An RNA of 177 nucleotides, treated with DMS and read out base by base. For DMS, 635 sequencing reads were counted.
[RMDB]
RNA sequence: GGGAACGACUCGAGUAGAGUCGAAAAGAUAUGGAUCGUACCGACAUGCUCUUGAUCGGAAACGAUCAAAGAGCAACAGCGGUCCCCCACGAUCCUAAGUCAAAAGCCCUUCCUUCGGGAAGGGCAACAAAUUUUACCCGUUCGCGGGUAAAAUUUGAAAAGAAACAACAACAACAAC
Reactivity to DMS in 0.01 (KOAc 150mM, MgCl2 10mM, bicine 150mM(pH8.5), 24C), signal-to-noise 1, nucleotides 027 to 126: g000a080u000a300u050g010g000a010u020c010g000u000a050c020c010g000a050c050a300u000g010c000u010c020u020u000g010a010u000c000g020g000a030a190a210c030g000a000u000c000a020a020a050g000a010g010c000a030a040c300a190g000c050g000g000u000c090c030c030c140c070a030c000g000a000u000c000c010u010a040a130g000u000c080a080a100a200a180g020c000c000c020u000u000c010c010u000u010c230g130g020g000a030a010g000g000g000c010a000a000
Source information: The RNA was probed in 150 mM KOAc, 10 mM MgCl2 and 150 mM bicine (pH 8.5) at 24 C.